[RMDB]
RNA sequence: GGGAACGACUCGAGUAGAGUCGAAAACAUACGCCGCUGGGAUCCCACUAGAUCGAUACCUACCCACCUCUACUGAAGCGCGCACGGUAGAGAGGGUAUCCGGAUCAUGGGAUCCUGUGCUGAAGCGCGCACGGCAACCGAAAGGUGCGAAUUACACGUAUGCCAGCGUGUUCGCACGCUGGCAUACAAAAGAAACAACAACAACAAC
Reactivity to 2A3 in 0.01 (KOAc 150mM, MgCl2 10mM, bicine 150mM(pH8.5), 24C), signal-to-noise 2, nucleotides 027 to 156: c040a050u300a090c070g120c220c010g050c140u190g030g000g000a000u000c000c030c030a020c140u260a110g000a000u000c010g000a000u010a010c000c000u060a120c070c060c050a080c020c010u000c000u030a010c010u010g010a170a080g010c000g000c000g000c000a010c020g010g000u010a000g000a030g020a000g010g010g020u000a000u020c050c130g300g000a000u010c000a040u010g010g000g000a000u000c000c000u000g000u000g000c000u020g000a140a060g040c000g000c000g000c000a000c020g000g000c020a010a020c040c010g120a100a080a070g100g000u000g030c000g020a020a010u170u220a050c120a010c030